Chemical mapping of a 170-nucleotide RNA with 2A3 and DMS.
The DMS profile rests on 17,987 reads.
For DMS the reverse transcriptase was MarathonRT.
The RNA was probed in 150 mM KOAc, 10 mM MgCl2 and 150 mM bicine (pH 8.5) at 24 C.
For 2A3, 10,608 sequencing reads were counted.
RNA sequence: GGGAACGACUCGAGUAGAGUCGAAAAGAAGAUAGAAGGGGAGACCCCGAUCAGAAUGCCGAUCGGGUGCAAGCACCUCUGGAGUCAUCCGGCCCCAAAGGAGGAGAGUCCCGCCAGGGGUGAUCCAACACCUCUUGCUUCGGCAAGAGGAAAAGAAACAACAACAACAAC
Reactivity to 2A3 in 0.01 (KOAc 150mM, MgCl2 10mM, bicine 150mM(pH8.5), 24C), signal-to-noise 5, nucleotides 027 to 129: g020a020a000g020a010u190a030g080a040a010g000g000g000g010a040g000a000c010c000c000c030g010a000u000c010a010g240a300a090u230g120c060c080g010a000u010c010g020g000g000u010g000c020a040a030g030c000a030c020c000u030c010u020g010g020a030g020u010c020a090u000c040c020g080g010c030c000c010c010a060a070a040g060g010a020g000g010a040g010a000g050u030c030c020c010g020c040c010a020g000g000g000g000u010g000a010u010c010c000a050a030c010a010
Reactivity to DMS in 0.01 (KOAc 150mM, MgCl2 10mM, bicine 150mM(pH8.5), 24C), signal-to-noise 7, nucleotides 027 to 129: g010a040a010g000a040u010a050g010a090a040g060g010g040g030a000g000a220c030c010c010c020g010a050u030c040a080g080a170a090u000g030c090c070g030a000u010c030g010g030g030u020g000c140a110a050g030c060a160c020c010u030c030u040g010g000a110g020u030c040a110u050c040c050g060g000c000c010c000c030a050a090a100g010g000a180g000g000a050g000a130g010u010c020c020c060g000c110c080a060g030g010g030g030u020g010a090u040c120c090a110a010c060a000